[RMDB]
RNA sequence: GGGAACGACUCGAGUAGAGUCGAAAAGAUAUGGAUGGCUCUAUUCCCACCGAAGAACUCGGAAACGAGGGAGGUGGCGAAUAGUGAGGCCAUCCUAAGUCAAAACGUAGCAGUUCGCUGCUACGAAGCAUACUCUUGAGUUCGCUCAAGAGUAUGCAAAAGAAACAACAACAACAAC
Reactivity to 2A3 in 0.01 (KOAc 150mM, MgCl2 10mM, bicine 150mM(pH8.5), 24C), signal-to-noise 3, nucleotides 027 to 126: g010a010u070a030u150g010g000a010u010g000g000c010u020c000u240a000u010u010c010c000c000a000c010c020g160a290a070g010a030a020c000u000c020g040g000a110a040a060c010g000a020g010g010g020a030g020g010u000g010g000c070g000a000a000u020a000g020u060g250a160g040g000c010c020a000u000c000c000u000a020a000g010u000c040a030a000a070a120c010g010u000a000g000c010a010g000u060u150c260g060c150u000g000c000u000a000c000g000a030a000
Reactivity to DMS in 0.01 (KOAc 150mM, MgCl2 10mM, bicine 150mM(pH8.5), 24C), signal-to-noise 3, nucleotides 027 to 126: g010a050u010a300u010g010g010a010u000g010g030c000u000c010u000a020u010u000c030c000c000a010c030c000g070a090a160g000a150a120c010u000c000g000g000a110a090a160c010g000a020g010g000g000a070g000g030u000g000g000c140g000a010a010u000a010g000u000g020a070g020g030c010c000a010u000c000c000u000a030a060g010u010c030a080a070a060a170c000g020u000a000g000c000a020g030u000u000c270g020c000u000g000c000u000a000c000g010a030a090